[RMDB]
RNA sequence: GGGAACGACUCGAGUAGAGUCGAAAACCGAGGCGCGAUUAUUGCUAAUUGAAAACUUUUCCCAAUACCCCGCCGUGACGACUUGAAAUAUAGUCGGCAUUGGCAAUUUUUGACAGUCUCUACGGAGUCAAACUUCUGUCUUCGGACAGAAGUUUGAAAAAGAAACAACAACAACAAC
Reactivity to DMS in 0.01 (KOAc 150mM, MgCl2 10mM, bicine 150mM(pH8.5), 24C), signal-to-noise 1, nucleotides 027 to 126: c000c000g000a030g000g020c030g030c040g030a020u000u020a020u000u020g000c000u000a090a050u000u020g000a050a060a010a120c100u000u000u000u000c020c010c040a110a250u010a070c090c040c010c100g000c030c020g050u000g000a030c000g000a000c000u000u000g000a150a120a100u070a090u040a000g020u000c000g020g000c010a030u010u050g080g000c020a020a030u030u100u020u000u040g000a060c090a150g000u020c010u000c040u000a120c040g000g000a180g050
Reactivity to 2A3 in 0.01 (KOAc 150mM, MgCl2 10mM, bicine 150mM(pH8.5), 24C), signal-to-noise 2, nucleotides 027 to 126: c040c050g010a060g000g080c060g000c000g040a040u010u060a040u070u160g000c010u060a120a120u080u080g100a040a050a030a110c060u040u050u050u020c000c000c000a010a000u040a060c020c050c000c000g000c030c000g030u020g000a020c000g000a020c000u010u020g000a000a020a000u160a070u140a050g000u000c000g010g000c000a000u030u190g000g000c000a000a010u080u050u030u000u020g090a060c060a060g040u020c020u000c000u000a030c100g050g050a000g030